[RMDB]
RNA sequence: GGGAACGACUCGAGUAGAGUCGAAAAGGGGUCAAGGCGCGAAACGAUCCCUAGAGCUUUGAUCUAUACUGAAGCCUCCACGGUAUAGGGAGCUCUUGGGAUCGGAGCCUUGACGGAGGCACCCAAAUCGAAUUGACCGUUCGCGGUCAAUUCGAAAGGUAUGUUAAGUGUUCGCACUUAACAUACCAAAAGAAACAACAACAACAAC
Reactivity to 2A3 in 0.01 (KOAc 150mM, MgCl2 10mM, bicine 150mM(pH8.5), 24C), signal-to-noise 2, nucleotides 027 to 156: g010g000g120g020u010c000a000a000g010g000c020g040c130g260a100a060a020c000g000a000u000c000c000c000u020a010g000a000g010c000u300u160u010g000a000u000c000u000a000u000a000c000u020g060a110a010g000c000c000u010c000c000a000c000g000g010u000a000u000a000g000g000g010a000g000c000u000c000u010u010g000g000g000a000u000c000g000g000a000g000c000c000u000u000g000a000c000g000g000a000g000g000c000a040c000c000c000a020a060a030u050c000g000a000a000u000u000g000a000c000c000g030u050u070c300g020c010g110g000u000c000a000a000u000u000c000g000a020a010a000
Conditions: 150 mM KOAc, 10 mM MgCl2 and 150 mM bicine (pH 8.5), 24 C. The record gives the reactivity of an RNA of 207 nucleotides to 2A3. 2A3 adducts were read by reverse transcription with SuperScript II with manganese. The 2A3 profile rests on 11,522 reads. It was measured as part of the RMDB library RNAMAK.